Conditions: 150 mM KOAc, 10 mM MgCl2 and 150 mM bicine (pH 8.5), 24 C.
An RNA of 207 nucleotides, treated with DMS and 2A3 and read out base by base.
Values cover nucleotides 27 to 156.
For 2A3 the reverse transcriptase was SuperScript II with manganese.
The data come from the RNA Mapping Database (RMDB), library OK3TST.
The 2A3 profile rests on 1,519 reads.
RNA sequence: GGGAACGACUCGAGUAGAGUCGAAAAAACUGCAAUCAGCAGUAAGAGGUUAUCCCCAUGAACACAUGGUGGCAAAAUAAUAUGGAAGCCUAUAUUGGUCCGAUCCUAUCAUUGAUGGGCAUAGGGAUUAGCGGUCUAAUCGCUUGGGUUUGGGCGCUAAUAUUUCCUAGUUCGCUAGGAAAUAUUAAAAAGAAACAACAACAACAAC
Reactivity to DMS in 0.01 (KOAc 150mM, MgCl2 10mM, bicine 150mM(pH8.5), 24C), signal-to-noise 3, nucleotides 027 to 156: a050a030c020u010g010c030a210a130u020c170a190g030c000a030g010u010a080a070g000a130g000g020u000u010a080u000c000c000c000c010a070u020g010a060a110c140a110c060a060u000g000g030u000g030g030c060a070a080a090a070u000a050a090u010a090u000g010g020a140a260g000c050c000u000a100u010a180u010u010g020g010u000c030c030g000a160u000c020c020u000a060u000c020a070u000u010g010a120u010g000g000g020c050a060u010a070g000g020g020a090u010u000a050g010c020g010g000u000c080u010a060a070u000c010g000c030u000u000g000g010g010u010u000u010g010g010g010c050g000c120
Reactivity to 2A3 in 0.01 (KOAc 150mM, MgCl2 10mM, bicine 150mM(pH8.5), 24C), signal-to-noise 2, nucleotides 027 to 156: a000a000c040u020g000c020a060a120u110c050a170g000c000a000g010u040a110a060g080a040g110g000u100u090a040u090c030c000c000c000a020u080g070a160a010c050a010c010a110u030g000g020u070g030g000c010a000a050a070a170u160a170a020u080a090u160g060g020a050a030g010c000c000u090a070u030a060u200u140g020g010u030c000c020g010a030u010c000c010u050a020u060c040a080u060u160g020a030u040g040g030g000c080a080u100a070g030g010g010a050u050u050a000g010c010g050g030u080c090u150a090a070u100c030g000c020u020u060g040g010g030u040u090u060g030g000g000c010g010c020